[RMDB]
This 177-nucleotide RNA was probed chemically with 2A3. Source: RMDB library OK1LIB, as collected in RNAgym. The RNA was probed in 150 mM KOAc, 10 mM MgCl2 and 150 mM bicine (pH 8.5) at 24 C. For 2A3 the reverse transcriptase was SuperScript II with manganese.
RNA sequence: GGGAACGACUCGAGUAGAGUCGAAAAGUGCGGCUUACGGUGGAGUUUUCCCACCAGCAGGGAAGUACGUCAUGGUCGACUCAAGUGGGCGCUUCGUGCAACUGCCGGACACCGUAUGGUCCAACACCAGGAGAGGCACUUUCGAGUGCCUCUCCUGAAAAGAAACAACAACAACAAC
Reactivity to 2A3 in 0.01 (KOAc 150mM, MgCl2 10mM, bicine 150mM(pH8.5), 24C), signal-to-noise 2, nucleotides 027 to 126: g210u190g000c070g040g000c000u050u050a000c030g020g000u000g000g170a300g060u150u060u080u030c000c000c000a050c000c000a000g000c030a000g000g020g070a080a050g000u060a010c070g010u010c030a170u150g150g000u160c120g030a130c000u080c190a160a080g120u300g010g010g050c070g000c020u000u050c050g040u010g000c060a100a040c040u040g000c000c000g000g000a000c000a000c000c000g000u020a060u180g000g000u030c000c010a070a030c020a080c190